An RNA of 170 nucleotides, treated with DMS and 2A3 and read out base by base. For DMS, 8,901 sequencing reads were counted. The data come from the RNA Mapping Database (RMDB), library 15KLIB. The RNA was probed in 150 mM KOAc, 10 mM MgCl2 and 150 mM bicine (pH 8.5) at 24 C.
[RMDB]
RNA sequence: GGGAACGACUCGAGUAGAGUCGAAAAACUCAGUACUGCCGGUUCGGUAGUUGUGAGUAUGCACAAGAGGGUGUUUGUAUUACCACAAAUGGCUCGUGGGCCAUUUUUAAUGACCACCAUCUUAAUAACGCACGGUUCUUCGGAACCGUGAAAAGAAACAACAACAACAAC
Reactivity to DMS in 0.01 (KOAc 150mM, MgCl2 10mM, bicine 150mM(pH8.5), 24C), signal-to-noise 3, nucleotides 027 to 129: a080c000u000c000a010g030u040a040c040u020g020c020c010g040g050u070u160c000g040g040u040a020g040u050u040g020u050g030a020g030u020a000u100g030c130a000c200a060a000g010a020g010g000g060u010g000u050u010u010g000u050a080u050u050a000c300c190a050c220a040a020a020u010g010g030c040u010c070g000u030g060g000g060c000c000a010u000u000u000u020u010a100a070u060g080a020c080c000a030c020c020a040u000c000u000u000a090a160u080a130a120c230g020
Reactivity to 2A3 in 0.01 (KOAc 150mM, MgCl2 10mM, bicine 150mM(pH8.5), 24C), signal-to-noise 6, nucleotides 027 to 129: a010c010u010c010a010g030u050a000c020u000g000c010c000g300g200u220u300c110g010g010u060a000g010u030u030g190u000g010a010g010u020a100u160g150c110a090c040a080a000g000a000g040g010g000u030g040u000u080u120g080u020a120u020u110a090c060c050a020c000a090a000a000u000g000g000c000u030c110g150u290g040g040g000c000c000a000u020u000u000u010u080a030a000u090g010a000c010c010a000c000c000a000u010c000u030u030a080a070u150a190a040c100g020